This 177-nucleotide RNA was probed chemically with DMS and 2A3. Values cover nucleotides 27 to 126.
[RMDB]
RNA sequence: GGGAACGACUCGAGUAGAGUCGAAAAGCAUUGGGAAAGUUAAUCAAAAGUGCAUCAAAACUUUCCCUAAACGAAAUCAAAAUCGUUAUGAUGCACUUUUGACAUCGAUUAUGAUGAAUAGACACAAUAUCUAUUUAUCUUUCGAGAUAAAUAGAUAAAAAGAAACAACAACAACAAC
Reactivity to DMS in 0.01 (KOAc 150mM, MgCl2 10mM, bicine 150mM(pH8.5), 24C), signal-to-noise 4, nucleotides 027 to 126: g020c130a070u000u010g010g020g010a080a110a120g010u010u010a070a130u000c020a010a000a010a020g000u010g000c000a000u000c010a060a110a110a130c090u000u000u000c000c000c010u000a040a010a000c010g000a020a070a050u010c300a090a110a160a070u000c000g010u000u000a200u010g000a010u010g010c010a010c010u000u000u000u000g000a070c000a010u000c000g010a130u010u010a080u020g000a010u000g000a080a060u000a050g020a160c080a060c130a050a100
Reactivity to 2A3 in 0.01 (KOAc 150mM, MgCl2 10mM, bicine 150mM(pH8.5), 24C), signal-to-noise 4, nucleotides 027 to 126: g030c060a100u120u210g000g000g060a050a070a060g050u090u110a090a080u050c020a020a000a000a000g000u000g000c000a000u010c020a020a030a090a160c010u000u010u010c000c000c000u020a000a000a010c000g020a030a020a030u230c090a020a110a010a130u020c010g010u030u030a060u140g010a000u010g000c000a000c000u000u000u020u000g010a010c000a010u010c010g130a150u140u190a130u300g010a000u020g010a040a090u060a090g090a040c040a000c010a090a090